[RMDB]
RNA sequence: GGGAACGACUCGAGUAGAGUCGAAAAGAUAUGGAAUGCCCAUAUCGAACGCGGAGCCGAUAAGAUCCCAUCGGAAACGAUGGAAGAUCUUUUGACGGCUCGCGUUCGAUAUGGGCAUUCCUAAGUCGUAGUGUUACUUCUUCGGAAGUAACACUACAAAAGAAACAACAACAACAAC
Reactivity to DMS in 0.01 (KOAc 150mM, MgCl2 10mM, bicine 150mM(pH8.5), 24C), signal-to-noise 2, nucleotides 027 to 126: g010a090u010a300u020g010g000a030a010u010g020c000c020c000a020u000a020u020c020g000a010a010c010g030c000g070g010a010g040c000c000g020a170u000a020a010g020a010u000c000c000c000a010u000c000g020g000a210a150a200c020g000a030u000g000g010a100a090g010a020u000c000u020u000u000u010g010a170c080g020g020c020u010c010g010c020g000u000u020c000g000a020u010a000u010g020g000g000c020a000u000u000c000c000u000a010a070g020u000c140